Structure probing data (2A3 and DMS) for a 177-nucleotide construct. The data come from the RNA Mapping Database (RMDB), library OK2TRN. Reactivities are given for positions 27 through 126. In probing experiments dimethyl sulfate is read out at A N1 and C N3, which are open when not base-paired.
[RMDB]
RNA sequence: GGGAACGACUCGAGUAGAGUCGAAAAGAGGCAACGGAACGCCACCUCAGUUCUGUUGUGGAUCAGGUGCUGAAUUACUUACGCAACGGGGUCCGCGUGACAAAGAUACCGAGCAAGGGCAGUGCUACAUGCGUUUUACUUUCGAGUAAAACGCAUGAAAAGAAACAACAACAACAAC
Reactivity to 2A3 in 0.01 (KOAc 150mM, MgCl2 10mM, bicine 150mM(pH8.5), 24C), signal-to-noise 1, nucleotides 027 to 126: g090a020g100g000c020a000a030c030g000g030a050a000c050g060c060c000a070c020c040u050c030a010g000u060u010c010u000g050u070u020g020u070g030g030a070u070c040a030g000g090u020g000c010u030g030a080a070u160u070a150c030u090u050a070c070g070c040a190a060c070g080g000g000g000u000c000c000g110c080g060u150g020a020c030a000a060a040g080a060u130a080c030c040g020a000g040c040a030a020g000g020g000c000a000g040u040g030c000u030a030
Reactivity to DMS in 0.01 (KOAc 150mM, MgCl2 10mM, bicine 150mM(pH8.5), 24C), signal-to-noise 4, nucleotides 027 to 126: g000a160g000g000c030a040a020c050g010g010a050a030c040g020c110c090a100c100c060u000c060a170g020u000u000c020u000g000u010u010g010u000g020g000a060u010c100a140g010g020u000g020c040u000g010a100a090u000u010a110c090u000u020a090c170g010c050a050a070c050g000g000g010g000u000c040c050g010c100g030u010g000a080c130a050a080a080g000a090u010a050c060c020g000a110g000c060a080a090g000g000g000c030a020g020u000g010c040u010a160